[RMDB]
RNA sequence: GGGAACGACUCGAGUAGAGUCGAAAACAGUAAAGGUAGAGGUGGUAGCAGAAUGUGUUUUAUGUUUUAGUUUAAUGAAAAAGAAACUAUGUUAGCUUGUGGACAUAAAAUUGGAGUGCAGUAGCAACAAAUGUGAAGUGUCUACUUCUGCUAGUAAGGCACCGUAAUUAUUCGUAAUUACGGUGCCAAAAGAAACAACAACAACAAC
Reactivity to DMS in 0.01 (KOAc 150mM, MgCl2 10mM, bicine 150mM(pH8.5), 24C), signal-to-noise 1, nucleotides 027 to 156: c080a130g000u010a090a070a080g000g040u010a040g000a090g010g080u020g010g030u000a060g040c000a080g040a050a080u020g060u000g030u000u000u000u000a040u000g030u000u020u000u000a110g000u000u000u000a070a110u020g000a100a030a160a110a130g000a020a080a000c040u010a050u000g010u000u000a140g060c030u000u000g000u010g020g020a000c020a030u000a030a060a040a090u000u000g040g000a200g060u000g030c020a090g000u000a110g000c030a000a080c070a030a050a050u000g010u010g010a080a130g040u020g050u010c090u000a020c030u000u000c040u030g060c020u000a050g020u010a110a130
Reactivity to 2A3 in 0.01 (KOAc 150mM, MgCl2 10mM, bicine 150mM(pH8.5), 24C), signal-to-noise 2, nucleotides 027 to 156: c030a020g020u100a030a040a040g040g040u030a020g030a030g060g000u020g020g010u010a010g020c020a010g000a160a080u090g040u010g040u030u000u010u080a080u030g050u000u040u020u110a010g000u010u000u120a110a090u070g100a040a120a030a010a000g070a020a030a000c040u010a020u060g020u010u090a000g000c030u020u060g020u000g030g000a010c000a010u110a000a140a010a060u020u050g070g010a090g020u040g000c000a020g050u090a000g050c000a000a050c000a010a160a050u120g000u070g030a030a020g030u020g010u010c000u000a030c000u020u020c040u010g000c010u010a020g040u090a020a110